[RMDB]
Chemical mapping of a 115-nucleotide RNA with DMS and 2A3. It was measured as part of the RMDB library P50LIB. 2A3 adducts were read by reverse transcription with SuperScript II with manganese.
RNA sequence: GGGAACGACUCGAGUAGAGUCGAAAAGCUACUCAACAAUAAUAAAUUAAAUUUAUUCUUAAUCGAACGAGAUAUACACGGCCGUUCGCGGCCGUAAAAGAAACAACAACAACAAC
Reactivity to DMS in 0.01 (KOAc 150mM, MgCl2 10mM, bicine 150mM(pH8.5), 24C), signal-to-noise 2, nucleotides 027 to 095: g020c040u010a000c020u000c030a100a090c140a110a080u030a060a060u020a020a030a100u030u020a050a080a250u020u010u010a030u020u000c070u000u000a060a090u020c060g000a060a060c150g010a020g010a070u010a070u020a090c140a050c130g060g040c060c000g000u010u070c140g030c010g060g040c030c040g000u050a000
Reactivity to 2A3 in 0.01 (KOAc 150mM, MgCl2 10mM, bicine 150mM(pH8.5), 24C), signal-to-noise 2, nucleotides 027 to 095: g020c000u050a040c010u020c030a040a060c050a050a090u160a120a050u110a060a090a030u200u180a110a020a050u100u060u050a090u060u030c000u050u150a090a070u100c030g020a060a070c050g020a020g000a140u100a000u040a110c110a000c020g000g000c000c000g000u010u010c120g020c000g000g000c000c000g000u000a010